[RMDB]
RNA sequence: GGGAACGACUCGAGUAGAGUCGAAAAUCGCAGUGACAAAGAGAGUGGGUAGGGUUUGAGGCCCCUGUUCCUGAGGACUUGAGUGCUGUUUUACAUACGGGUCAGACACGGCUAGAGGCCAAGGUCAUCCAUCUGUGGUUUUCGAACCACAGAUGGAAAAAGAAACAACAACAACAAC
Reactivity to DMS in 0.01 (KOAc 150mM, MgCl2 10mM, bicine 150mM(pH8.5), 24C), signal-to-noise 3, nucleotides 027 to 126: u000c090g050c030a090g030u000g020a090c160a070a080a070g000a100g010a050g030u000g000g000g000u010a040g000g040g020u010u030u000g010a160g000g010c040c020c000c050u010g000u010u000c010c020u000g010a080g000g000a100c040u000u020g020a110g030u000g000c090u000g000u010u000u020u020a130c110a060u040a070c090g010g000g010u010c080a080g010a070c060a060c170g000g000c030u000a070g000a070g020g010c040c030a080a050g000g000u020c100a190
Reactivity to 2A3 in 0.01 (KOAc 150mM, MgCl2 10mM, bicine 150mM(pH8.5), 24C), signal-to-noise 3, nucleotides 027 to 126: u100c060g010c010a010g020u030g110a060c020a020a150a000g100a000g010a010g020u060g010g030g060u070a040g020g000g070u000u010u110g090a070g050g000c010c000c000c020u030g030u020u010c000c010u020g000a050g020g000a040c000u050u110g000a020g020u070g020c030u070g080u000u050u010u120a040c030a020u140a060c030g060g010g010u020c060a000g010a060c000a030c090g000g000c000u030a040g000a060g070g050c000c030a000a020g060g020u030c020a030